[RMDB]
RNA sequence: GGGAACGACUCGAGUAGAGUCGAAAACAAAAUUUUAACGCUCACCCCACGCAACAAGUGGAGUGGCGUUUCUGACUUGUCCCUCAAACAAAAACUCCUUUACACCUUCUAUGGUAAGGAGUCACUUCAUAGUUCCUUUGUUCGCAAAGGAACUAUGAAAAGAAACAACAACAACAAC
Reactivity to 2A3 in 0.01 (KOAc 150mM, MgCl2 10mM, bicine 150mM(pH8.5), 24C), signal-to-noise 2, nucleotides 027 to 126: c000a000a070a040a020u080u110u010u020a020a000c000g000c000u120c120a000c000c000c030c000a000c010g080c070a120a260c070a210a140g000u000g010g000a010g010u010g020g000c000g000u000u020u000c020u030g090a080c020u000u060g010u030c050c000c000u010c110a140a070a060c020a030a130a080a000a010c010u030c010c000u000u010u140a110c030a010c070c000u210u170c070u170a070u300g010g010u000a000a000g020g000a000g010u020c000a020c020u000u000